Conditions: 150 mM KOAc, 10 mM MgCl2 and 150 mM bicine (pH 8.5), 24 C. This 177-nucleotide RNA was probed chemically with DMS and 2A3.

[RMDB]
RNA sequence: GGGAACGACUCGAGUAGAGUCGAAAAGAUAUGGAGAGCUCAACAGCCGUUCGGUCGGAAACGACCGACGGACAUGAGCCUCCUAAGUCAAAACCUGUGCGUCGAUGUUCGCAUCGACGCACAGGAAGUGUAAGUUUAGGUUCGCCUAAACUUACACAAAAGAAACAACAACAACAAC
Reactivity to DMS in 0.01 (KOAc 150mM, MgCl2 10mM, bicine 150mM(pH8.5), 24C), signal-to-noise 3, nucleotides 027 to 126: g000a040u000a300u010g000g010a030g000a180g010c000u010c000a030a070c240a180g020c000c000g000u010u000c010g040g010u000c000g000g000a080a080a090c010g000a010c010c000g010a010c010g000g010a050c050a190u000g010a020g000c020c000u000c000c000u000a010a050g000u000c020a080a090a140a150c010c000u000g020u000g000c000g010u000c000g020a010u010g010u010u010c180g020c000a010u000c000g000a010c000g000c010a000c010a000g000g010a010a020
Reactivity to 2A3 in 0.01 (KOAc 150mM, MgCl2 10mM, bicine 150mM(pH8.5), 24C), signal-to-noise 3, nucleotides 027 to 126: g010a020u050a030u120g000g010a010g020a070g020c010u000c010a060a140c080a290g050c010c020g060u250u160c010g030g010u030c010g020g030a100a050a060c020g000a000c000c000g000a000c000g000g010a000c010a080u020g000a000g000c020c000u000c000c000u010a120a000g050u030c030a010a020a050a200c000c000u010g000u000g010c010g010u000c000g000a000u000g010u060u090c180g020c190a000u020c000g000a010c000g000c000a000c010a000g000g000a000a010
The DMS profile rests on 3,598 reads. The 2A3 profile rests on 8,309 reads. As a SHAPE reagent, 2A3 marks flexible, mostly unpaired nucleotides at the ribose 2'-OH.